[RMDB]
RNA sequence: GGGAACGACUCGAGUAGAGUCGAAAAUCAGAUGAGACUAGUCAUCAGACUAGAUAGUAUCACACUACAGGUACAUAGUAGAGACAUACAUAGAUGGGUAUGACACAUCAGAGGCGCGGGCCACCGACACCUCAUCCCUAUUCGUAGGGAUGAGGUGAAAAGAAACAACAACAACAAC
Reactivity to DMS in 0.01 (KOAc 150mM, MgCl2 10mM, bicine 150mM(pH8.5), 24C), signal-to-noise 3, nucleotides 027 to 126: u000c060a090g040a070u030g010a090g040a160c030u000a010g000u010c010a130u020c250a180g010a040c010u000a010g010a090u020a080g010u000a040u000c060a040c080a100c080u000a070c070a060g010g020u000a080c110a080u010a040g020u000a050g010a070g010a080c130a030u020a080c110a080u010a090g020a040u010g010g000g010u000a030u020g010a150c090a100c070a050u000c030a070g010a070g000g020c080g000c050g000g000g020c040c010a070c060c070g010a180
Reactivity to 2A3 in 0.01 (KOAc 150mM, MgCl2 10mM, bicine 150mM(pH8.5), 24C), signal-to-noise 2, nucleotides 027 to 126: u080c010a020g070a120u080g040a020g050a040c020u020a000g010u000c010a150u070c070a160g000a000c020u020a010g010a020u060a070g050u030a050u030c020a020c030a010c110u130a000c020a040g110g000u070a030c000a040u090a060g100u100a020g020a010g020a200c010a060u120a020c030a000u080a030g060a140u070g090g020g040u070a060u100g060a040c010a000c000a150u030c010a010g000a030g060g000c010g000c030g050g000g000c020c000a040c010c010g020a030
Overview: The record gives the reactivity of an RNA of 177 nucleotides to DMS and 2A3. It was measured as part of the RMDB library OK2TRN.